[RMDB]
RNA sequence: GGGAACGACUCGAGUAGAGUCGAAAACGUGUUGAUCUCGGCCGCCUGCGCCAUCGUCGCGGACCACGAGCGCGACGCGCUGUGCUCGUGCAGCCGCAGCGCGCCGUCGAUACGCGCCUGCAUCGCAGGAUCAGCUAUCGUUCGCGAUAGCUGAUCCAAAAGAAACAACAACAACAAC
Reactivity to DMS in 0.01 (KOAc 150mM, MgCl2 10mM, bicine 150mM(pH8.5), 24C), signal-to-noise 2, nucleotides 027 to 126: c030g000u000g010u000u000g010a150u020c050u000c050g010g020c060c050g010c090c010u000g020c010g000c120c130a080u020c080g020u000c060g000c030g000g000a120c130c080a050c110g010a130g020c060g020c020g020a050c030g010c060g000c020u000g010u000g010c140u010c210g020u010g010c050a050g000c040c040g020c010a020g010c030g000c070g010c020c030g010u010c040g000a050u000a040c040g030c010g000c020c000u000g000c050a130u010c090g010c150a090
Reactivity to 2A3 in 0.01 (KOAc 150mM, MgCl2 10mM, bicine 150mM(pH8.5), 24C), signal-to-noise 2, nucleotides 027 to 126: c030g000u060g060u060u070g090a110u060c050u020c080g000g000c020c030g000c020c030u020g000c030g020c030c040a130u180c020g000u000c010g030c060g030g090a170c050c060a100c180g070a070g070c010g000c000g010a040c010g030c010g000c010u040g010u010g020c080u050c170g140u200g040c000a000g030c010c010g000c000a010g020c020g000c040g000c000c000g010u030c000g000a010u000a050c020g000c010g020c020c000u030g060c040a170u120c090g020c120a050
Structure probing data (DMS and 2A3) for a 177-nucleotide construct. DMS adducts were read by reverse transcription with MarathonRT. Conditions: 150 mM KOAc, 10 mM MgCl2 and 150 mM bicine (pH 8.5), 24 C. For 2A3 the reverse transcriptase was SuperScript II with manganese.